Chemical mapping of a 207-nucleotide RNA with DMS and 2A3. It was measured as part of the RMDB library M2RFPK.
[RMDB]
RNA sequence: GGGAACGACUCGAGUAGAGUCGAAAAAGCGGCGAGUCAAUGGUACGCCACUGACUCGCCGCAAUACGUUCAUCCUAAUUUAAUCAAAUUAGGACGGAAGUAGUCGUGAGACGAAGGAACGCAUUAAAAAACGUAGCGGUCUUCGGACCGCUACGAACUCUUAGUGUUUCUUCGGAAACACUAAGAGAAAAGAAACAACAACAACAAC
Reactivity to DMS in 0.01 (KOAc 150mM, MgCl2 10mM, bicine 150mM(pH8.5), 24C), signal-to-noise 1, nucleotides 027 to 156: a100g000c000g050g010c000g000a070g080u000c010a030a020u000g000g030u000a190c300g030c000c010a000c010u010g030a070c030u000c010g000c020c000g000c000a000a000u000a000c000g010u000u010c020a200u000c010c000u000a000a000u010u000u000a200a190u010c140a090a010a040u000u000a030g010g000a020c050g000g000a060a080g010u000a040g010u000c060g030u000g000a300g010a150c000g000a130a150g040g000a060a080c050g060c000a110u020u030a000a020a060a070a100a230c030g040u000a010g020c020g010g000u010c000u010u020c300g030g010a030c000c000g000c010u000a000c000g000a000a030
Reactivity to 2A3 in 0.01 (KOAc 150mM, MgCl2 10mM, bicine 150mM(pH8.5), 24C), signal-to-noise 2, nucleotides 027 to 156: a000g000c010g010g000c000g000a000g030u000c000a030a030u020g020g000u030a070c280g040c000c000a000c000u000g000a010c000u000c010g000c010c010g000c000a000a000u010a000c010g000u000u010c000a000u020c000c000u000a010a020u030u040u060a300a290u290c220a040a010a000u000u000a000g010g000a000c000g020g010a020a000g000u000a020g000u000c010g020u030g110a070g000a000c010g000a010a000g020g000a020a000c010g000c030a010u100u300a150a080a020a000a020a010c020g000u000a000g040c000g000g000u000c010u030u070c120g060g000a000c000c030g000c000u000a000c000g000a010a010